[RMDB]
RNA sequence: GGGAACGACUCGAGUAGAGUCGAAAACUUCUACGCUUCGGCGUAGAAGAAAGGAGUUUGUCGCUCCACCAAAAUCGAAGCGAUAAAAAGUACGAAAGUACAAAACGCGAAUCUUCGGAUUCGCGAACAGUGUUUUAUUGUUCGCAAUAAAACACUGAAAAGAAACAACAACAACAAC
Reactivity to DMS in 0.01 (KOAc 150mM, MgCl2 10mM, bicine 150mM(pH8.5), 24C), signal-to-noise 5, nucleotides 027 to 126: c000u000u000c000u000a000c000g010c010u000u010c190g030g020c000g020u000a000g010a010a000g010a040a080a100g010g000a100g010u000u000u010g010u000c070g010c000u000c000c000a130c080c080a030a070a090a070u010c100g000a060a020g010c030g010a020u010a030a040a090a110a090g000u000a000c000g000a120a050a160g000u000a000c000a070a050a090a180c020g020c000g010a020a000u000c000u000u010c180g030g000a020u000u000c000g000c010g000a040a070
Reactivity to 2A3 in 0.01 (KOAc 150mM, MgCl2 10mM, bicine 150mM(pH8.5), 24C), signal-to-noise 5, nucleotides 027 to 126: c000u000u000c000u010a000c000g010c010u030u060c240g150g000c000g000u000a010g000a000a000g010a010a000a000g020g000a060g020u040u060u060g100u110c030g000c010u010c000c000a040c010c020a090a100a010a050u200c090g070a120a010g070c010g010a000u090a070a170a020a000a010g000u000a010c020g040a140a030a010g010u020a010c010a020a110a020a020c010g000c000g000a000a000u000c010u040u040c200g110g000a000u010u000c000g010c000g000a010a010

Chemical mapping of a 177-nucleotide RNA with DMS and 2A3. It was measured as part of the RMDB library M2PK50. 2A3 adducts were read by reverse transcription with SuperScript II with manganese. The 2A3 profile rests on 11,120 reads. Values cover nucleotides 27 to 126. As a SHAPE reagent, 2A3 marks flexible, mostly unpaired nucleotides at the ribose 2'-OH.